[RMDB]
Source information
Chemical mapping of a 177-nucleotide RNA with 2A3 and DMS. For DMS, 2,058 sequencing reads were counted. For DMS the reverse transcriptase was MarathonRT. It was measured as part of the RMDB library OK2TRN.
RNA sequence: GGGAACGACUCGAGUAGAGUCGAAAAGAACUGGAGGAUGAACGUCAUGAAGAGGUAUGACAUCAUGUUGGGGGCGAUCUCGGUGAGGAUGAUCUUCCCCGAACGCAUCCCCGUGAUCCGCGCGAGGCAGAGUUCAAUCGUUCGCGAUUGAACUCUGAAAAGAAACAACAACAACAAC
Reactivity to 2A3 in 0.01 (KOAc 150mM, MgCl2 10mM, bicine 150mM(pH8.5), 24C), signal-to-noise 2, nucleotides 027 to 126: g070a050a020c080u160g040g000a120g020g010a040u040g040a110a050c040g020u000c010a040u050g050a060a070g090a050g160g040u130a020u050g020a030c010a020u080c030a020u170g040u050u140g040g000g010g020g030c010g000a020u020c010u000c080g000g080u140g070a100g180g040a060u280g030a060u050c000u040u040c000c000c000c040g030a010a000c000g000c000a040u050c010c000c010c010g010u020g000a020u030c020c030g060c040g010c050g030a040g080g000
Reactivity to DMS in 0.01 (KOAc 150mM, MgCl2 10mM, bicine 150mM(pH8.5), 24C), signal-to-noise 3, nucleotides 027 to 126: g000a090a100c070u000g020g020a120g000g000a040u000g010a050a090c170g010u010c020a010u000g000a160a080g020a080g020g030u020a060u010g010a040c060a110u000c130a050u000g010u000u000g010g010g020g060g000c300g010a050u000c050u000c010g000g000u010g000a080g000g020a130u010g020a100u000c030u000u010c020c010c000c000g000a010a020c050g000c000a070u000c000c000c000c000g010u000g000a080u010c040c040g040c130g020c050g020a070g010g000